[RMDB]
RNA sequence: GGGAACGACUCGAGUAGAGUCGAAAACAUAGCGUUUCACAAUGUGCGCCAUUAACAUUGUUUAUCCAAGCACGUUUCGCAAUGUACGGCGCAGAAACAUUGCCAACACAAAUACGCUUCACGAUGUAAAACAUCGGUGCGUUCGCGCACCGAUGAACAUUCGAAAUACGUUCGCGUAUUUCGAAUGAAAAGAAACAACAACAACAAC
Reactivity to 2A3 in 0.01 (KOAc 150mM, MgCl2 10mM, bicine 150mM(pH8.5), 24C), signal-to-noise 9, nucleotides 027 to 156: c050a050u160a020g000c010g010u010u100u130c140a050c010a020a020u020g000u020g030c010g010c020c010a080u170u200a050a030c010a010u010u010g050u030u100u100a120u060c060c060a110a040g120c080a070c180g000u040u090u110c060g000c000a000a000u000g010u020a020c060g010g000c010g010c010a010g020a010a070a000c010a010u000u030g040c060c050a150a030c050a050c040a110a140a040u170a030c020g030c000u090u090c080a060c120g090a060u110g040u280a030a070a080a040c000a000u000c010g000g000u000g010c000g010u020u030c190g010c000g000c060a000c000c010g000a000u000g000a000a000
Reactivity to DMS in 0.01 (KOAc 150mM, MgCl2 10mM, bicine 150mM(pH8.5), 24C), signal-to-noise 2, nucleotides 027 to 156: c050a090u000a050g010c040g010u000u000u000c100a060c030a050a110u000g030u000g010c000g020c010c010a160u010u000a120a060c030a040u000u010g020u000u000u000a110u010c060c040a070a160g040c060a100c100g000u010u000u000c130g020c020a030a010u000g010u010a100c100g010g010c000g050c010a060g000a140a130a160c010a020u010u000g010c020c040a050a120c080a160c080a060a050a090u000a020c020g020c010u000u000c040a080c040g010a120u000g030u000a070a040a090a190c000a000u000c000g040g020u000g010c020g020u000u000c260g040c020g030c000a010c010c010g000a010u000g010a040a130
An RNA of 207 nucleotides, treated with 2A3 and DMS and read out base by base.
For 2A3, 9,037 sequencing reads were counted.
The data come from the RNA Mapping Database (RMDB), library M2RFPK.